[RMDB]
RNA sequence: GGGAACGACUCGAGUAGAGUCGAAAAUCUUCUAGAGCAACAAAAGCCGAUGCAUAGUUGGCUUGAGCAAGACAUCGUACUGCAGCCCGCCAGAAUGGUGUACGCUUCGGGACAUCAAGACGUCUAAGAGCGUUAAUAACAUCUUGAUACAAAAGUAUCCUAGGCAUUUAUUCGUAAAUGCCUAGGAAAAAGAAACAACAACAACAAC
Reactivity to 2A3 in 0.01 (KOAc 150mM, MgCl2 10mM, bicine 150mM(pH8.5), 24C), signal-to-noise 2, nucleotides 027 to 156: u040c000u130u000c010u140a040g000a020g080c030a020a090c000a070a210a080a010g000c000c010g060a020u070g070c070a200u190a280g050u010u030g000g000c000u010u010g000a020g000c030a070a000g040a010c000a020u030c060g050u120a050c020u020g040c000a020g040c010c010c000g000c050c020a000g060a120a030u020g000g030u020g010u030a000c050g000c020u050u030c080g040g010g000a010c020a000u160c020a080a100g080a090c100g040u000c020u050a210a000g010a000g060c010g000u010u080a120a020u080a100a040c010a000u050c000u040u120g090a020u110a060c050a000a020a040a010g300u300a000
Reactivity to DMS in 0.01 (KOAc 150mM, MgCl2 10mM, bicine 150mM(pH8.5), 24C), signal-to-noise 1, nucleotides 027 to 156: u000c010u020u000c030u010a110g020a120g000c000a180a170c060a070a100a100a070g030c030c040g000a040u010g000c210a120u020a220g000u000u000g000g030c040u000u020g010a160g000c030a200a160g000a150c050a020u000c050g050u000a120c120u000g000c030a130g020c040c070c050g000c060c020a110g000a090a030u000g000g020u000g020u020a080c050g000c010u020u000c020g020g010g000a090c040a190u000c020a080a050g020a080c110g020u000c050u010a150a030g000a130g020c030g000u000u010a020a070u000a040a120c020a030u000c000u000u000g000a100u020a260c110a040a090a060a160g020u040a060